[RMDB]
Overview:
This 177-nucleotide RNA was probed chemically with 2A3 and DMS.
RNA sequence: GGGAACGACUCGAGUAGAGUCGAAAAGCGGUUUCCAGCCGUACAGAUCGGACGAGCGAUUGAUGCAUCCGGCAGGUGCCUUUCCGCUGGAGGCCUACUCUCACUUCGCCGGAUUGCAGGGUAUUCAGCCCCGUAGGUAUUUCGAUACCUACGGGGCAAAAGAAACAACAACAACAAC
Reactivity to 2A3 in 0.01 (KOAc 150mM, MgCl2 10mM, bicine 150mM(pH8.5), 24C), signal-to-noise 1, nucleotides 027 to 126: g000c000g000g020u000u000u060c030c050a040g030c000c010g000u050a050c080a060g250a160u120c020g020g000a100c040g090a050g200c080g100a090u040u140g150a080u070g020c000a000u030c000c000g000g110c040a010g000g000u060g080c000c020u010u020u010c020c020g000c000u010g050g000a010g020g000c010c000u070a090c010u020c000u020c030a040c020u060u090c100g000c020c000g000g000a000u000u200g000c020a020g020g060g000u120a190u060u080c060a000
Reactivity to DMS in 0.01 (KOAc 150mM, MgCl2 10mM, bicine 150mM(pH8.5), 24C), signal-to-noise 2, nucleotides 027 to 126: g000c070g000g020u000u000u010c010c020a190g010c010c050g030u000a200c130a100g000a050u000c090g010g000a110c130g000a100g020c020g000a090u010u010g000a150u000g000c010a040u000c000c000g020g010c000a050g010g010u010g000c040c020u000u000u000c010c030g000c000u010g000g010a020g000g000c070c080u000a140c060u000c020u000c080a060c030u000u000c180g000c010c010g000g000a000u010u000g030c000a030g020g000g000u000a080u000u000c200a150